This 177-nucleotide RNA was probed chemically with DMS and 2A3. The DMS profile rests on 1,153 reads. DMS adducts were read by reverse transcription with MarathonRT. The RNA was probed in 150 mM KOAc, 10 mM MgCl2 and 150 mM bicine (pH 8.5) at 24 C. Source: RMDB library OK1LIB, as collected in RNAgym.
[RMDB]
RNA sequence: GGGAACGACUCGAGUAGAGUCGAAAAAUUGGGCUGCGCCCGCUUGAGCAUCGUCAGCGGCGAUGGUAAUGUGGCCAAUCUAAUACAAUCAAAUUAUUGUCAUAGAUACAUUUCACGAUGAAAGCCCUACUACCCCGAGUUUCGACUCGGGGUAGUAAAAAGAAACAACAACAACAAC
Reactivity to DMS in 0.01 (KOAc 150mM, MgCl2 10mM, bicine 150mM(pH8.5), 24C), signal-to-noise 1, nucleotides 027 to 126: a130u060u000g000g000g000c030u000g020c170g020c030c010c150g040c020u000u000g000a020g000c160a020u000c060g000u000c000a200g020c130g020g020c010g000a060u000g000g010u020a060a070u080g000u030g020g000c210c080a170a010u010c000u020a120a100u060a000c020a050a020u000c110a100a120a130u130u020a040u000u000g030u000c230a080u000a020g020a010u010a170c100a050u000u060u030c130a130c050g050a020u050g000a080a110a030g000c020c000c020
Reactivity to 2A3 in 0.01 (KOAc 150mM, MgCl2 10mM, bicine 150mM(pH8.5), 24C), signal-to-noise 3, nucleotides 027 to 126: a000u070u070g030g000g070c000u050g010c060g020c100c030c030g000c040u110u230g030a020g040c080a110u170c070g150u020c040a020g050c020g030g010c010g040a080u080g090g030u140a060a050u180g040u000g010g010c000c000a040a000u000c000u070a000a050u050a020c010a040a140u110c060a070a130a160u220u150a090u050u100g030u000c010a000u020a030g080a070u090a110c000a010u020u010u040c130a070c100g020a000u050g070a190a020a030g010c000c000c020

2A3 adducts were read by reverse transcription with SuperScript II with manganese.